[RMDB]
RNA sequence: GGGAACGACUCGAGUAGAGUCGAAAAACAUUAAGUUUCGACUUAAUGUAAACCCGAUGAAGCGGCACAUACGGAGCUUCAUACAUCUAAGACUGCAAAUAAAAAGUUGAUCCUUCGGGAUCAACAACCAAAUACUAGCGUUCGCGCUAGUAUUUGGAAAAGAAACAACAACAACAAC
Reactivity to DMS in 0.01 (KOAc 150mM, MgCl2 10mM, bicine 150mM(pH8.5), 24C), signal-to-noise 2, nucleotides 027 to 126: a010c000a040u000u000a040a000g010u010u030u010c180g010a080c000u000u000a020a000u000g010u030a040a140a130c000c000c000g050a010u010g010a040a040g000c000g000g050c070a100c190a130u020a090c120g050g000a090g000c010u000u010c020a040u040a100c090a120u010c100u010a110a110g000a130c050u000g000c140a020a080a120u010a030a080a140a150a050g000u000u010g020a010u000c000c000u010u010c240g040g030g000a000u000c000a000a000c000a060a070
Reactivity to 2A3 in 0.01 (KOAc 150mM, MgCl2 10mM, bicine 150mM(pH8.5), 24C), signal-to-noise 3, nucleotides 027 to 126: a000c010a010u000u010a000a000g000u030u040u130c110g040a000c020u000u020a000a000u000g000u010a070a010a000c010c010c020g000a040u030g000a010a010g000c030g180g040c090a060c040a210u300a160c180g170g050a020g010c000u020u000c010a010u020a040c050a040u030c050u140a110a050g120a160c080u120g060c120a110a100a130u230a040a170a040a030a010g000u000u000g000a000u000c000c040u030u060c290g070g000g000a000u000c000a000a000c000a010a000